Record summary: The record gives the reactivity of an RNA of 177 nucleotides to 2A3.
[RMDB]
RNA sequence: GGGAACGACUCGAGUAGAGUCGAAAACGUCAGCUACACUAUUAUUUUGCCAGUCAACAACGCUACCCAUAGAGCCUUGCUUAUCAUCCACUUUGAACACGUAGCGCGUGUAGUUGGUUGGGCGAUAAGUGCCGCACGACUUCGGUCGUGCGGCACUAAAAGAAACAACAACAACAAC
Reactivity to 2A3 in 0.01 (KOAc 150mM, MgCl2 10mM, bicine 150mM(pH8.5), 24C), signal-to-noise 1, nucleotides 027 to 126: c020g000u030c000a000g080c000u000a010c060a000c000u050a030u300u090a100u000u230u170u030g060c120c030a150g010u050c070a010a010c000a000a000c070g010c000u010a040c000c100c000a000u140a000g120a000g000c060c110u130u090g050c000u010u100a050u050c020a000u060c000c040a050c070u000u000u070g100a080a030c000a050c010g140u080a060g050c050g000c020g020u000g020u060a210g090u000u020g000g030u020u040g040g000g000c000g000a000u070a070
Reactivities are given for positions 27 through 126.